The record gives the reactivity of an RNA of 207 nucleotides to 2A3 and DMS. Values cover nucleotides 27 to 156. The RNA was probed in 150 mM KOAc, 10 mM MgCl2 and 150 mM bicine (pH 8.5) at 24 C. For DMS the reverse transcriptase was MarathonRT. It was measured as part of the RMDB library M2RFPK. The 2A3 profile rests on 1,920 reads. For 2A3 the reverse transcriptase was SuperScript II with manganese.
RNA sequence: GGGAACGACUCGAGUAGAGUCGAAAACAGCAAAAAGGAACCGAUUCCCACCAAGUUCGGAAAGAGAUACCGGGCGAGGCGCUGAAGAAAGAAUCUCGUUUCAGACACCCCAAGGACUCGACUGAAGAAUGCACGCCAUCGUUCGCGAUGGCGUGAACAAACGUAUCAAGUUCGCUUGAUACGUUUGAAAAGAAACAACAACAACAAC
Reactivity to 2A3 in 0.01 (KOAc 150mM, MgCl2 10mM, bicine 150mM(pH8.5), 24C), signal-to-noise 3, nucleotides 027 to 156: c020a020g080c030a040a050a060a060a120g110g000a060a020c040c040g030a080u050u000c000c000c000a020c050c030a090a020g030u030u020c020g040g050a130a140a030g040a060g010a030u050a080c010c010g000g000g020c070g020a060g030g010c090g000c070u080g030a060a020g050a040a170a020g050a080a110u050c050u030c110g050u010u030u040c070a070g020a090c010a070c020c040c000c040a020a060g020g010a030c030u020c060g040a050c050u140g010a040a000g070a080a060u170g060c010a000c000g000c000c000a010u000c000g050u050u040c170g010c000g130a010u010g000g000c000g000u000g000a000a000
Reactivity to DMS in 0.01 (KOAc 150mM, MgCl2 10mM, bicine 150mM(pH8.5), 24C), signal-to-noise 2, nucleotides 027 to 156: c050a230g030c030a070a050a110a090a160g030g010a080a060c020c040g000a170u010u000c020c020c010a150c080c030a090a150g000u000u010c010g020g000a060a080a090g020a150g010a130u000a140c040c020g030g000g010c010g000a110g000g040c030g010c040u000g000a080a090g010a150a090a070g000a150a140u010c030u000c050g020u010u000u000c020a090g020a300c050a070c010c010c030c010a060a130g000g000a040c020u000c020g030a130c030u000g000a080a100g000a080a090u020g020c010a000c000g010c000c010a000u000c000g030u000u020c300g000c050g010a040u010g010g000c030g010u000g020a000a080